[RMDB]
Structure probing data (DMS and 2A3) for a 177-nucleotide construct. For 2A3 the reverse transcriptase was SuperScript II with manganese.

RNA sequence: GGGAACGACUCGAGUAGAGUCGAAAAGUGGAACGCACCUUUGCAGAGAUUAAACCAUUAUAUGAACAACUUCAUGCUUAUGUGAGGGCAAAGUUGAUGCAUACCUACCCUUCCUAUAUCAGCCCUACACUUCUACGUUCUUCGGAACGUAGAAGUGAAAAGAAACAACAACAACAAC
Reactivity to DMS in 0.01 (KOAc 150mM, MgCl2 10mM, bicine 150mM(pH8.5), 24C), signal-to-noise 3, nucleotides 027 to 126: g030u020g000g000a020a070c260g020c030a050c040c000u000u000u010g010c050a050g000a160g010a070u000u040a080a240a200c110c010a050u020u040a080u030a050u020g000a040a150c170a040a130c150u010u010c010a060u000g000c170u050u020a070u010g020u050g000a080g000g030g000c000a040a050a070g010u050u010g000a070u000g010c000a050u000a090c040c040u000a070c050c010c010u000u000c010c020u010a080u010a110u000c100a080g010c010c000c020u010a150
Reactivity to 2A3 in 0.01 (KOAc 150mM, MgCl2 10mM, bicine 150mM(pH8.5), 24C), signal-to-noise 8, nucleotides 027 to 126: g060u050g000g020a090a030c040g000c010a020c000c000u000u010u060g010c030a020g060a060g020a240u120u200a080a060a040c040c010a050u120u080a120u040a050u170g060a050a060c050a060a070c090u040u030c030a040u060g070c060u150u080a050u200g060u060g080a120g030g060g010c010a000a010a020g020u050u060g090a110u060g020c010a040u100a160c000c010u040a050c020c000c000u010u030c030c000u080a080u030a040u170c050a020g040c010c010c010u020a020